[RMDB]
RNA sequence: GGGAACGACUCGAGUAGAGUCGAAAACAUAGGAUCACGCUAGCGUCGAUCCAUGGAGUACUCUAGGUACAUAUCGACUAGUGCUAGAGCGAGUCAUGCGUGAUCUGUGGUACCAUGAGUACCAUGGGUCCACCCCUAGUUUCGACUAGGGGUGGACAAAAGAAACAACAACAACAAC
Reactivity to 2A3 in 0.01 (KOAc 150mM, MgCl2 10mM, bicine 150mM(pH8.5), 24C), signal-to-noise 2, nucleotides 027 to 126: c020a020u150a100g050g020a000u000c000a000c010g000c030u060a040g100c010g120u040c050g090a040u030c000c010a010u030g010g020a100g080u020a040c020u020c070u090a100g110g000u030a030c040a050u130a080u130c030g050a030c030u030a040g150u030g190c030u070a050g020a030g150c030g040a030g030u010c040a080u160g020c020g020u030g000a000u000c020u030g040u030g060g000u000a010c030c040a170u180g030a000g040u010a000c000c020a010u000g080g000
Reactivity to DMS in 0.01 (KOAc 150mM, MgCl2 10mM, bicine 150mM(pH8.5), 24C), signal-to-noise 2, nucleotides 027 to 126: c040a060u010a110g000g000a000u010c000a020c000g020c050u000a170g010c110g020u000c070g000a050u000c000c070a030u000g010g020a160g000u000a040c010u000c070u000a140g030g020u000a040c000a150u000a100u020c050g000a000c080u010a070g010u010g010c030u000a060g000a120g010c040g010a080g020u000c020a080u010g000c040g050u000g000a020u000c010u000g020u000g010g020u000a020c000c030a160u000g000a110g030u000a000c020c000a000u010g020g010